[RMDB]
RNA sequence: GGGAACGACUCGAGUAGAGUCGAAAACGUCCUAGUUUCGACUAGGACGAAAUAAAAUCAGGGGUAAAUAAUCGAGGCGUAUUACCGCUGAACGCCUCGAUAAAAUGCGAUGAUUCGUCAUCGCAAAGUUCCGUUAAACGUUCGCGUUUAACGGAACAAAAGAAACAACAACAACAAC
Reactivity to DMS in 0.01 (KOAc 150mM, MgCl2 10mM, bicine 150mM(pH8.5), 24C), signal-to-noise 1, nucleotides 027 to 126: c050g000u000c000c000u000a000g010u000u010u010c150g000a040c010u000a000g000g010a000c000g010a010a040a070u000a050a050a080a050u000c080a040g000g000g000g040u010a100a070a080u000a100a010u000c000g000a010g000g010c000g020u000a050u020u000a030c010c020g000c030u000g000a030a020c010g000c000c000u000c000g000a000u000a020a040a090a090u010g000c010g000a010u000g000a060u000u010c160g060u000c000a000u000c000g000c000a000a040a050
Reactivity to 2A3 in 0.01 (KOAc 150mM, MgCl2 10mM, bicine 150mM(pH8.5), 24C), signal-to-noise 1, nucleotides 027 to 126: c000g000u000c000c000u010a000g000u000u050u050c200g080a020c020u010a010g000g030a000c000g000a000a000a000u110a010a060a030a030u060c050a030g030g010g030g030u070a060a090a110u100a170a000u060c000g000a000g020g000c000g000u020a040u100u050a040c020c050g000c060u040g020a010a010c010g000c000c000u000c000g000a000u020a010a040a000a000u070g010c000g000a000u020g010a010u000u060c130g010u020c040a060u000c000g000c020a000a010a000